An RNA of 207 nucleotides, treated with 2A3 and read out base by base.
[RMDB]
RNA sequence: GGGAACGACUCGAGUAGAGUCGAAAAAACAAACAUCAAAUCGCAUAGCAAAGAGUCAAAAAAAUAGAGAGCUUUGCGAGACCUACCAAGGGAGAAGAGAUACCAUCCAAGGAGCUGAAGAGAAAUCGAGAGCUCACGGCGUUCGCGCCGUGAGCAACUAAUCGUUAGAGUUCGCUCUAACGAUUAGAAAAGAAACAACAACAACAAC
Reactivity to 2A3 in 0.01 (KOAc 150mM, MgCl2 10mM, bicine 150mM(pH8.5), 24C), signal-to-noise 1, nucleotides 027 to 156: a000a000c120a060a050a010c050a080u170c050a000a120a040u010c010g010c010a000u050a050g000c000a040a150a000g070a130g090u110c110a120a130a020a120a080a070a120u240a040g090a000g020a000g000c000u020u030u020g020c020g000a010g020a000c000c010u030a070c030c030a040a060g000g010g020a080g020a110a000g030a000g000a000u040a110c010c030a040u040c020c010a030a030g010g010a020g020c020u050g060a040a000g040a020g010a030a080a020u070c060g020a060g020a020g210c000u000c010a000c040g000g010c030g020u030u090c260g010c000g000c030c030g000u000g000a020g000c000a010a000

Source: RMDB library M2RFPK, as collected in RNAgym. The RNA was probed in 150 mM KOAc, 10 mM MgCl2 and 150 mM bicine (pH 8.5) at 24 C.